[RMDB]
RNA sequence: GGGAACGACUCGAGUAGAGUCGAAAAGUCCCCAGUAUGACGUUAAACUGCUGACUCAUACAUACUGACACCGGUUCCUCAACAGGCUGUGUGGGACAAUAGAAUAACAAGGCUGUCAAUUUGAGCUAAAACUCCUCGGGGUUCGCCCCGAGGAGAACGGGAGUAAACAGUUCGCUGUUUACUCCCGAAAAGAAACAACAACAACAAC
Reactivity to 2A3 in 0.01 (KOAc 150mM, MgCl2 10mM, bicine 150mM(pH8.5), 24C), signal-to-noise 2, nucleotides 027 to 156: g030u020c000c000c000c000a050g010u050a020u120g000a010c050g030u010u010a040a040a020c010u070g000c020u000g020a000c020u000c020a050u100a250c000a030u150a110c090u040g010a000c020a040c050c020g060g020u090u040c000c000u060c030a100a070c000a070g200g000c090u100g050u040g020u020g050g030g010a000c000a000a080u100a110g090a060a090u120a140a030c050a110a010g060g020c110u010g030u040c030a030a050u000u030u160g040a030g030c020u060a050a050a000a190c000u000c010c000u010c010g000g000g040g000u060u010c080g080c000c000c000c000g000a000g000g000a000g000a000a000